Notes: Source: RMDB library VIROID, as collected in RNAgym. The record gives the reactivity of an RNA of 207 nucleotides to 2A3. The reactions ran in a buffer of 150 mM KOAc, 10 mM MgCl2 and 150 mM bicine (pH 8.5), at 24 C. The 2A3 profile rests on 946 reads. For 2A3 the reverse transcriptase was SuperScript II with manganese.
RNA sequence: GGGAACGACUCGAGUAGAGUCGAAAAUGUCUCUCCUGAAGGAGGAAGGAGCUCUCGAACGCUCUCCCGACCGCUCGGAUGGGCCGCUUCCGGCAAGAGGGGCCGAAAGUGUGAAGGGAGAGACCGCUCCGAGAGUUGGGAGAAGAAAGAGAGCGAAGUCUCGACAAUACUUCGGUAUUGUCGAGACAAAAGAAACAACAACAACAAC
Reactivity to 2A3 in 0.01 (KOAc 150mM, MgCl2 10mM, bicine 150mM(pH8.5), 24C), signal-to-noise 2, nucleotides 027 to 156: u120g040u000c020u000c000u030c020c030u210g140a200a060g050g100a040g060g010a050a150g070g090a070g000c000u010c000u000c000g040a100a060c080g030c070u000c010u020c000c000c000g020a030c010c040g160c050u010c000g000g030a110u070g090g050g010c030c010g050c060u040u000c030c030g010g050c030a090a020g050a020g090g020g070g000c000c030g040a090a120a080g070u100g040u150g190a090a130g070g040g000a060g000a000g020a060c010c010g010c040u020c010c010g010a000g000a000g010u000u010g000g010g020a020g020a030a020g000a030a030a020g000a000g000a000g000c000g000a020a000